[RMDB]
RNA sequence: GGGAACGACUCGAGUAGAGUCGAAAAACCAGUAACUCCUACCCUAUGGUGUCUCCUAUCUGUAGGUCCCAGUGGAGCGAUGAAGCCUGCCCAGCGGGGCUUGGCGGUCAUGGGCUUUCUCUCCGGAUACACAAGGAAAUUUCGAUUUCCUUGUGUAAAAAGAAACAACAACAACAAC
Reactivity to DMS in 0.01 (KOAc 150mM, MgCl2 10mM, bicine 150mM(pH8.5), 24C), signal-to-noise 9, nucleotides 027 to 126: a100c030c020a120g010u020a090a090c060u010c020c010u000a110c050c030c030u010a070u010g000g010u000g010u000c040u000c030c030u010a060u010c050u010g010u010a070g010g010u010c030c030c020a090g020u010g000g000a060g020c060g010a070u020g010a090a120g010c020c010u000g000c020c010c020a210g020c150g010g010g010g010c020u010u010g010g020c020g000g010u010c040a060u010g010g010g010c030u000u000u000c030u010c030u010c010c020g000g010a300
Reactivity to 2A3 in 0.01 (KOAc 150mM, MgCl2 10mM, bicine 150mM(pH8.5), 24C), signal-to-noise 9, nucleotides 027 to 126: a010c010c000a010g040u040a030a050c020u020c020c010u030a070c020c000c010u050a060u100g060g000u040g050u030c020u010c020c020u070a100u110c020u040g080u070a030g010g050u040c010c010c000a040g040u060g050g030a040g030c030g010a030u090g060a040a010g020c010c020u040g010c020c020c010a070g110c100g040g030g010g000c010u030u050g020g010c020g010g010u050c030a080u080g030g040g000c010u030u060u010c030u000c000u000c010c000g010g010a040
Structure probing data (DMS and 2A3) for a 177-nucleotide construct. Values cover nucleotides 27 to 126.